[RMDB]
Notes: An RNA of 207 nucleotides, treated with 2A3 and read out base by base.
RNA sequence: GGGAACGACUCGAGUAGAGUCGAAAAAAUCGUCGACGCAUCGACGACGGUCCUGCCAUGAGACCGUAACGAGCACAUGUCGCCUCGAAUGGCGUCGGGGAGCCGGCAGCUUACCCCAAGGAUGAGCAAAAGAAUGAAACGUUCGCGUUUCAUUCAAGACUUUUGUAACCUUCGGGUUACAAAAGUCAAAAGAAACAACAACAACAAC
Reactivity to 2A3 in 0.01 (KOAc 150mM, MgCl2 10mM, bicine 150mM(pH8.5), 24C), signal-to-noise 1, nucleotides 027 to 156: a000a000u030c000g000u010c020g010a070c100g010c220a100u040c000g000a000c000g000a000c000g000g000u000c000c010u030g060c010c030a060u060g030a020g000a050c000c000g010u010a000a030c010g000a020g030c020a030c020a210u140g030u120c120g000c040c000u000c040g040a030a070u080g010g020c020g000u050c020g000g000g010g010a050g140c020c000g110g000c000a060g010c000u020u100a180c000c000c030c010a000a000g090g000a020u120g040a050g040c040a050a030a000a080g020a000a000u020g000a000a000a000c000g040u070u070c200g030c000g030u000u000u000c000a000u000u000c000a000a020

The 2A3 profile rests on 764 reads.